[RMDB]
RNA sequence: GGGAACGACUCGAGUAGAGUCGAAAAUUGCAUUAAGGGGGUGCCCAUCGGGUGUCUAAACGUUGCUUUGAACCAGAAAGAAGAGUGUAACUUCUUAGACGUGCCAUGAUUUCAUCCUGACCUAUGAAUGGAGCCUCCAGUGGCUGGAAAAGUCACAUGCAUAAUUAAUGUUCGCAUUAAUUAUGCAAAAAGAAACAACAACAACAAC
Reactivity to DMS in 0.01 (KOAc 150mM, MgCl2 10mM, bicine 150mM(pH8.5), 24C), signal-to-noise 3, nucleotides 027 to 156: u010u000g030c010a110u000u020a100a300g020g000g010g170g030u000g010c080c010c030a110u000c020g020g010g040u000g020u000c070u010a040a100a080c090g010u000u000g010c030u010u000u000g030a120a160c080c060a220g010a090a060a080g000a120a050g000a140g040u000g030u010a080a080c020u000u000c040u010u000a080g010a060c050g000u010g050c050c010a060u000g020a120u010u000u010c070a100u010c020c030u000g000a080c040c060u000a110u020g010a060a100u000g000g000a300g010c020c000u010c020c020a120g010u010g030g030c000u020g000g020a050a050a100a060g020u000c010a000c010a300
Reactivity to 2A3 in 0.01 (KOAc 150mM, MgCl2 10mM, bicine 150mM(pH8.5), 24C), signal-to-noise 3, nucleotides 027 to 156: u100u090g020c040a030u070u220a160a160g010g000g000g000g020u040g040c050c000c000a000u040c030g000g010g020u100g010u030c030u060a040a000a020c040g050u020u030g020c040u130u070u070g030a070a060c040c040a070g140a060a130a000g030a080a000g070a040g040u120g000u040a040a030c000u020u020c000u020u010a020g010a010c030g050u020g040c050c000a030u100g070a180u130u230u150c080a060u070c020c030u070g030a060c020c010u110a100u180g060a060a030u010g030g010a040g000c000c000u000c000c000a000g000u000g000g000c000u000g030g040a090a150a020a010g010u020c000a000c000a010

This 207-nucleotide RNA was probed chemically with DMS and 2A3. For 2A3, 1,621 sequencing reads were counted. The reactions ran in a buffer of 150 mM KOAc, 10 mM MgCl2 and 150 mM bicine (pH 8.5), at 24 C. The data come from the RNA Mapping Database (RMDB), library OK3TST. Reactivities are given for positions 27 through 156.